[RMDB]
RNA sequence: GGGAACGACUCGAGUAGAGUCGAAAACUGCACACAAGCACAAACCAGGGUAUAUACAACAUAGUUUUGGUUGGCCAUUAGAUGAUCGUACUUAUGGUGGGUCUUGGUUGUAUCAUUUUGGUGAUAACUGUCCGUGCUUGUUCGCAAGCACGGACAGAAAAGAAACAACAACAACAAC
Reactivity to DMS in 0.01 (KOAc 150mM, MgCl2 10mM, bicine 150mM(pH8.5), 24C), signal-to-noise 1, nucleotides 027 to 126: c000u000g000c090a060c160a140c020a030a070g000c130a040c040a130a100a020c030c010a050g010g000g010u010a060u010a130u000a150c210a040a030c010a090u000a080g000u000u010u000u000g020g000u000u000g040g040c050c070a000u000u000a060g000a120u000g000a110u000c170g020u000a070c030u000u010a040u000g000g020u000g000g020g010u000c010u000u000g020g010u010u000g000u000a010u000c100a050u030u030u020u020g020g000u020g000a080u020a060a120

Structure probing data (DMS) for a 177-nucleotide construct. Values cover nucleotides 27 to 126. It was measured as part of the RMDB library OK2TST.